This 177-nucleotide RNA was probed chemically with 2A3. Values cover nucleotides 27 to 126. It was measured as part of the RMDB library OK1LIB. The 2A3 profile rests on 396 reads.
[RMDB]
RNA sequence: GGGAACGACUCGAGUAGAGUCGAAAACGGGUACUGCGGUUAAAUCGGGCUUGCGUUUCCGGCAGUCUGAUGGAACGGCCGGUUAUAACGUUUGAAUUAUAACGAAAAUUGCAGGGUCUGACAGCAGGCGGACUCCGAUAUUCGUAUCGGAGUCCGCAAAAGAAACAACAACAACAAC
Reactivity to 2A3 in 0.01 (KOAc 150mM, MgCl2 10mM, bicine 150mM(pH8.5), 24C), signal-to-noise 1, nucleotides 027 to 126: c000g000g000g040u050a000c000u020g070c010g000g090u010u180a000a000a160u040c000g000g000g000c040u000u000g000c070g000u100u000u050c000c000g040g070c000a000g000u000c000u000g260a260u290g010g020a080a010c000g040g010c010c030g050g030u150u270a090u100a140a000c000g000u000u000u120g060a060a070u280u000a080u040a160a000c010g090a000a120a000a070u130u100g000c010a000g090g000g120u000c000u090g000a040c000a080g110c000a000g000